[RMDB]
RNA sequence: GGGAACGACUCGAGUAGAGUCGAAAAAGUGUAGUAUCUGUUCUUUUCAGUUUAAUCUCUGAAAGUGUUCUAAGGAACACAACAUUGAUUAAUCUCAUUUUUGGAUCUCGUGGCAAGGCCUCUGUGCGUCAAAAUAUUAGUUCGCUAAUAUUUUGACAAAAGAAACAACAACAACAAC
Reactivity to DMS in 0.01 (KOAc 150mM, MgCl2 10mM, bicine 150mM(pH8.5), 24C), signal-to-noise 3, nucleotides 027 to 126: a050g030u000g010u010a040g020u000a060u000c060u000g000u000u000c080u000u000u000u000c030a040g010u000u000u010a020a020u000c010u000c030u000g010a020a150a170g020u000g010u000u000c000u000a130a150g040g010a020a010c010a010c010a040a300c020a020u000u000g000a010u000u010a020a030u000c020u010c100a060u000u000u000u000u000g020g000a080u000c030u000c050g030u000g000g030c060a060a090g010g010c030c040u010c060u010g010u010g000c210
Reactivity to 2A3 in 0.01 (KOAc 150mM, MgCl2 10mM, bicine 150mM(pH8.5), 24C), signal-to-noise 3, nucleotides 027 to 126: a000g070u080g010u060a050g000u020a070u060c030u030g070u070u070c040u160u130u030u030c010a000g010u000u000u050a020a020u020c010u000c010u010g030a110a080a110g030u010g010u000u000c030u080a130a160g200g000a020a000c020a000c000a000a060c000a010u010u020g020a000u000u020a040a050u020c020u010c060a090u060u050u070u100u120g060g000a050u000c010u010c050g050u050g020g000c050a080a040g070g010c000c010u040c050u100g110u070g060c010